[RMDB]
RNA sequence: GGGAACGACUCGAGUAGAGUCGAAAAGAUUUGGGGAGGAGAGGGGAACCGAGGGGGGUUCGAACUCAAGAAGAGAAGAUUUUCGAGGAAAUACUCCCAAGAAGUUCCCGGAGGGAUCCAAGAGACGUAGGUAGUCCGUUCGCGGACUACAAAAGAAACAACAACAACAAC
Reactivity to DMS in 0.01 (KOAc 150mM, MgCl2 10mM, bicine 150mM(pH8.5), 24C), signal-to-noise 2, nucleotides 027 to 129: g060a060u030u070u050g020g000g060g080a080g010g020a090g020a130g020g060g000g000a000a080c080c000g040a110g030g010g010g010g010g040u000u060c100g030a110a090c050u020c000a110a000g000a080a080g000a100g000a050a140g020a130u000u000u070u040c040g010a120g040g000a030a060a100u040a100c070u010c030c000c130a030a020g030a110a110g010u000u010c010c000c000g050g050a080g020g020g010a030u020c130c030a020a020g010a040g020a000c060g000u050a100g040
Reactivity to 2A3 in 0.01 (KOAc 150mM, MgCl2 10mM, bicine 150mM(pH8.5), 24C), signal-to-noise 2, nucleotides 027 to 129: g080a050u110u140u150g000g000g000g010a070g090g020a090g080a050g040g000g010g000a030a020c050c040g010a080g050g030g000g000g000g000u070u070c080g020a010a010c000u020c060a050a020g040a100a020g010a060g000a070a000g000a020u010u120u020u070c020g000a010g020g050a000a120a000u090a000c020u040c070c010c020a020a010g040a050a000g010u020u030c010c000c000g000g020a010g020g010g010a030u030c000c000a020a000g020a000g000a020c050g060u050a000g070